An RNA of 207 nucleotides, treated with 2A3 and read out base by base. The reactions ran in a buffer of 150 mM KOAc, 10 mM MgCl2 and 150 mM bicine (pH 8.5), at 24 C. Values cover nucleotides 27 to 156. The 2A3 profile rests on 409 reads.

RNA sequence: GGGAACGACUCGAGUAGAGUCGAAAACACUACAUACACGUAAUGCCAAAUAGAAAAUAGUUUUAUUAUUAUAAGUUCGUAAUGUCAUAUCAGCUCCAUUAUCGAGUAAGUAUUUUGCAAUACGUAUGGUGUUGUGCUUUAUGGCAUAAUGUAAUGGUCACAUGUGAGUGUUCGCACUCACAUGUGAAAAAGAAACAACAACAACAAC
Reactivity to 2A3 in 0.01 (KOAc 150mM, MgCl2 10mM, bicine 150mM(pH8.5), 24C), signal-to-noise 1, nucleotides 027 to 156: c020a000c000u050a000c000a030u060a070c020a000c060g090u000a020a020u080g000c020c000a020a060a130u070a050g010a080a250a090a050u100a170g120u080u300u300u070a160u140u000a000u110u100a140u220a300a150g060u000u000c020g000u010a000a050u040g020u020c030a110u120a120u160c110a050g070c050u020c020c030a020u040u040a120u270c030g010a000g090u050a120a000g020u000a020u000u030u020u040g030c030a060a080u090a050c000g000u000a000u000g080g000u040g000u020u020g000u010g020c040u050u180u140a080u100g060g000c000a000u110a080a160u180g020u070a010a070u000g100g000